[RMDB]
RNA sequence: GGGAACGACUCGAGUAGAGUCGAAAAACGACGGCGUUACGACGCCGUCGAAGCAUCCGAGGAUAGAGGAAGCCGGGUCGCCCCGGCUGGGCGUGAAAUUCGACACGGCAUGGUACGCCAUGCCGAAAAAACAGCAUAUGUUCGCAUAUGCUGUUUUAAAAGAAACAACAACAACAAC
Reactivity to DMS in 0.01 (KOAc 150mM, MgCl2 10mM, bicine 150mM(pH8.5), 24C), signal-to-noise 6, nucleotides 027 to 126: a050c020g020a010c010g020g020c010g030u010u000a130c170g030a080c010g030c020c010g040u000c010g010a030a040g010c140a050u010c020c010g010a140g010g000a120u020a080g000a130g010g000a140a060g010c020c020g000g000g020u030c180g010c230c010c010c010g010g020c010u000g010g010g030c080g000u000g000a060a070a130u010u000c030g010a110c170a230c020g000g000c000a010u010g000g010u010a140c220g010c000c000a000u000g020c010c000g010a000a020
Reactivity to 2A3 in 0.01 (KOAc 150mM, MgCl2 10mM, bicine 150mM(pH8.5), 24C), signal-to-noise 4, nucleotides 027 to 126: a000c030g010a000c010g000g050c030g000u030u070a110c300g040a020c000g050c000c000g000u010c000g000a000a000g030c000a040u010c020c010g030a100g050g020a130u160a260g100a040g070g050a060a020g000c010c000g060g030g100u300c070g080c050c030c000c000g000g000c000u030g000g020g020c020g000u050g020a020a110a100u170u090c020g010a040c050a020c090g000g000c000a000u010g000g000u050a030c230g030c020c000a000u010g000c030c000g030a030a010